[RMDB]
RNA sequence: GGGAACGACUCGAGUAGAGUCGAAAAUCGUUCUUGAGACACCACUUUCUUAUGACUGUGUUUCUAACUUACUUUGUGUGAGGACAUCGGUAGAUGGGCAGUUCGGCUGGGGCGGCACGGGCUUGAACCAAAGAUCCAAAUUCGUUUGGAUCUUUGGAAAAGAAACAACAACAACAAC
Reactivity to 2A3 in 0.01 (KOAc 150mM, MgCl2 10mM, bicine 150mM(pH8.5), 24C), signal-to-noise 9, nucleotides 027 to 126: u040c010g010u030u000c010u040u110g050a050g010a020c020a020c030c020a060c050u070u120u050c050u070u190a110u180g070a080c060u030g000u000g020u030u040u020c030u050a100a080c020u040u110a010c010u080u160u180g110u090g010u020g080a040g020g030a010c010a050u060c030g030g030u050a060g030a110u070g010g010g000c010a050g010u070u060c020g030g000c030u030g010g000g010g010c010g000g010c020a020c030g010g000g010c000u030u050g020a030a010
Reactivity to DMS in 0.01 (KOAc 150mM, MgCl2 10mM, bicine 150mM(pH8.5), 24C), signal-to-noise 5, nucleotides 027 to 126: u010c030g010u000u010c010u000u020g000a080g010a070c080a060c040c090a060c100u000u010u010c060u000u000a090u010g000a080c080u000g020u000g010u000u000u000c050u020a070a110c070u000u010a050c050u010u030u030g010u020g000u000g000a050g000g000a090c060a030u010c060g010g000u000a050g000a090u000g000g000g020c040a050g010u010u010c090g010g000c040u010g010g010g000g030c020g010g000c060a040c080g010g000g000c060u000u010g000a080a210